[RMDB]
RNA sequence: GGGAACGACUCGAGUAGAGUCGAAAACACCUGAGUCACCCAAAUGGAUCCGCGCCAUGUGUACGGUCCAGGGGAACCCAACACCAUGGUGUCAUCGUCCAGUAGGGCAGCCGAUGUGCCCGCCUGACAAAAUAAAUGAUUUCGAUCAUUUAUUUUGAAAAGAAACAACAACAACAAC
Reactivity to 2A3 in 0.01 (KOAc 150mM, MgCl2 10mM, bicine 150mM(pH8.5), 24C), signal-to-noise 8, nucleotides 027 to 126: c040a010c000c020u020g030a020g050u040c030a070c020c000c000a070a120a090u050g010g000a020u060c040c030g000c010g000c010c020a100u100g100u040g010u050a020c060g000g000u000c030c050a150g020g020g000g010a010a020c010c020c010a030a020c020a020c050c030a030u050g000g020u020g050u070c030a080u100c030g050u000c010c010a030g040u080a090g060g000g000c010a010g050c040c050g160a170u120g040u080g060c010c010c030g020c010c020u040g010a020
Reactivity to DMS in 0.01 (KOAc 150mM, MgCl2 10mM, bicine 150mM(pH8.5), 24C), signal-to-noise 9, nucleotides 027 to 126: c100a080c020c010u010g010a060g020u000c050a180c010c000c010a060a120a160u000g010g000a020u010c130c200g020c030g010c010c010a060u010g010u010g020u000a070c150g000g010u000c010c030a140g000g010g010g000a190a060c030c010c050a120a090c090a050c090c060a040u000g010g010u000g000u000c040a080u010c140g000u000c020c020a070g010u010a140g010g010g010c030a090g010c070c090g000a090u010g010u000g010c010c010c040g010c090c050u000g000a250